[RMDB]
Chemical mapping of a 177-nucleotide RNA with DMS. The DMS profile rests on 788 reads. In probing experiments dimethyl sulfate is read out at A N1 and C N3, which are open when not base-paired. Conditions: 150 mM KOAc, 10 mM MgCl2 and 150 mM bicine (pH 8.5), 24 C.
RNA sequence: GGGAACGACUCGAGUAGAGUCGAAAACCGAUUCCGUCCAUCCCUUCCCCCUGAGGGUCGCCCAGGAAUGGCGGGACCCCACUCUGACAGGGUCCGCGUUCCAUCCUUUCUUACCUGAUGGCCGGCACGCUUGGAAUAAGUUCGCUUAUUCCAAGCGAAAAGAAACAACAACAACAAC
Reactivity to DMS in 0.01 (KOAc 150mM, MgCl2 10mM, bicine 150mM(pH8.5), 24C), signal-to-noise 1, nucleotides 027 to 126: c070c020g000a220u020u000c000c040g070u000c010c030a030u010c010c000c020u030u000c000c000c000c010c060u000g020a120g000g000g000u000c040g040c070c030c050a070g000g000a070a040u000g020g020c050g000g020g030a010c000c000c020c020a160c140u010c160u010g000a120c170a140g000g000g010u010c000c000g020c030g000u000u010c000c000a160u000c060c020u000u000u000c090u040u000a130c100c050u000g000a090u000g000g000c020c110g000g010c300a050